An RNA of 177 nucleotides, treated with 2A3 and DMS and read out base by base. For 2A3 the reverse transcriptase was SuperScript II with manganese. Conditions: 150 mM KOAc, 10 mM MgCl2 and 150 mM bicine (pH 8.5), 24 C. The DMS profile rests on 51,450 reads. The data come from the RNA Mapping Database (RMDB), library OK2TRN.
RNA sequence: GGGAACGACUCGAGUAGAGUCGAAAAGAUUGAGUGACAAUCACUGGGUCAGUGUGGCUCGACAGUCGGGCUACAGAUGGCUUCUGUAGAUCUGGUGUCAGAGUACCGAUAGCGUGCAGCCAUACGAGGUCACGAUUGUAUUCGUACAGUCGUGACCAAAAGAAACAACAACAACAAC
Reactivity to 2A3 in 0.01 (KOAc 150mM, MgCl2 10mM, bicine 150mM(pH8.5), 24C), signal-to-noise 9, nucleotides 027 to 126: g030a020u080u140g050a020g080u080g040a060c100a080a130u120c020a030c060u070g060g010g030u050c040a090g010u010g010u030g060g000c000u020c060g010a010c020a020g080u150c010g000g020g000c000u000a000c000a000g040a050u070g240g100c080u100u010c010u030g020u010a030g020a220u030c020u030g050g010u090g100u110c030a030g010a010g100u040a070c000c020g080a090u100a050g080c100g040u050g010c030a010g000c010c000a020u030a060c050g060a090
Reactivity to DMS in 0.01 (KOAc 150mM, MgCl2 10mM, bicine 150mM(pH8.5), 24C), signal-to-noise 9, nucleotides 027 to 126: g010a050u000u000g010a150g020u000g010a160c150a080a090u010c020a100c050u000g010g000g010u000c040a100g010u000g030u000g000g000c000u000c060g020a040c040a110g010u010c000g010g000g000c000u000a000c000a010g000a040u000g010g010c170u010u000c010u000g010u000a010g010a120u000c010u000g010g010u000g010u010c010a060g010a090g010u000a080c020c020g010a070u000a090g010c110g010u000g010c080a050g010c010c010a040u000a040c080g010a170